[RMDB]
The record gives the reactivity of an RNA of 207 nucleotides to DMS and 2A3.
The reactions ran in a buffer of 150 mM KOAc, 10 mM MgCl2 and 150 mM bicine (pH 8.5), at 24 C.
Reactivities are given for positions 27 through 156.
For DMS the reverse transcriptase was MarathonRT.
2A3 adducts were read by reverse transcription with SuperScript II with manganese.
Reactivities are rounded to 0.1 and cut off at 0 and 3.
RNA sequence: GGGAACGACUCGAGUAGAGUCGAAAACUUCUUAUCAGUGAAGACGAAAGAAAGCUCUCAAGAGUAGCAUCAACAGAUCAUCUGCUUGCUCAUGCUAACAUCGCUUUAAAAGCUGUCGGUGACAACAACUAUGUACACAUAAAAGAAAUACCGACUCUCGAGUAAACGUAUUCGUACGUUUACUCGAAAAAGAAACAACAACAACAAC
Reactivity to DMS in 0.01 (KOAc 150mM, MgCl2 10mM, bicine 150mM(pH8.5), 24C), signal-to-noise 2, nucleotides 027 to 156: c060u010u020c020u000u000a200u000c060a170g000u020g010a030a080g020a160c040g010a070a080a180g010a120a070a080g030c030u000c040u000c070a060a200g020a100g060u000a020g000c050a100u010c020a070a020c020a020g000a170u010c170a190u010c030u000g000c000u010u000g020c010u020c070a040u010g000c040u010a040a080c080a120u000c030g030c010u010u020u000a120a030a060a060g020c090u000g000u000c000g010g040u000g020a180c050a030a050c100a070a120c080u000a080u000g030u000a060c100a070c050a100u000a030a040a020a080g010a080a120a200u000a050c050c000g000a040c040u000c060
Reactivity to 2A3 in 0.01 (KOAc 150mM, MgCl2 10mM, bicine 150mM(pH8.5), 24C), signal-to-noise 5, nucleotides 027 to 156: c000u030u040c020u040u160a180u200c060a070g040u050g150a080a020g050a070c060g030a020a020a050g070a020a100a020g010c020u000c030u050c150a110a030g030a030g050u050a000g000c010a020u140c010a030a040c010a020g050a110u140c030a080u050c060u030g040c100u040u020g000c020u060c080a030u050g000c000u020a060a050c030a110u060c070g010c010u090u100u120a080a190a020a000g030c060u040g010u000c000g020g000u040g040a030c010a060a010c000a020a020c090u080a040u120g110u240a040c120a010c020a100u100a070a130a000a000g080a010a040a010u040a020c000c000g010a010c000u010c010